[RMDB]
The record gives the reactivity of an RNA of 177 nucleotides to DMS and 2A3. For 2A3, 727 sequencing reads were counted. The reactions ran in a buffer of 150 mM KOAc, 10 mM MgCl2 and 150 mM bicine (pH 8.5), at 24 C. High DMS reactivity at an A or C suggests that its Watson-Crick edge is free.

RNA sequence: GGGAACGACUCGAGUAGAGUCGAAAAUUGAUAGCCACUGUGCCAGCGCUGAAUAACUUCGCCAUCGCGCCAUUUACUGCUAUCAAAAACGGGUGUCAGUGGGCUGGUAAAAUCAGAGUAAUGGAACCAGGCCUACUGAAUUCGUUCAGUAGGCCUGAAAAGAAACAACAACAACAAC
Reactivity to DMS in 0.01 (KOAc 150mM, MgCl2 10mM, bicine 150mM(pH8.5), 24C), signal-to-noise 2, nucleotides 027 to 126: u010u010g000a060u010a020g010c010c180a140c180u000g010u000g030c000c000a030g010c030g000c050u010g010a050a090u000a060a110c160u000u000c080g030c010c030a120u000c080g010c040g020c020c050a040u000u000u000a110c070u000g010c000u010a060u000c000a040a020a050a080a060c050g000g020g000u000g010u000c050a040g000u020g020g020g020c000u010g010g000u000a050a080a080a050u010c060a090g020a100g020u020a090a020u010g000g000a210a070c120
Reactivity to 2A3 in 0.01 (KOAc 150mM, MgCl2 10mM, bicine 150mM(pH8.5), 24C), signal-to-noise 1, nucleotides 027 to 126: u000u020g000a020u030a040g000c000c030a080c090u090g070u130g030c030c030a100g030c020g060c070u080g030a040a060u100a150a000c060u080u090c030g000c090c020a100u020c060g020c110g020c070c010a090u150u130u020a090c050u060g010c000u020a030u080c050a080a000a080a000a000c000g010g000g020u030g060u060c010a000g080u030g040g060g030c020u010g030g020u070a010a000a010a040u130c020a000g040a070g190u100a070a110u040g010g090a000a000c000

The DMS profile rests on 1,051 reads.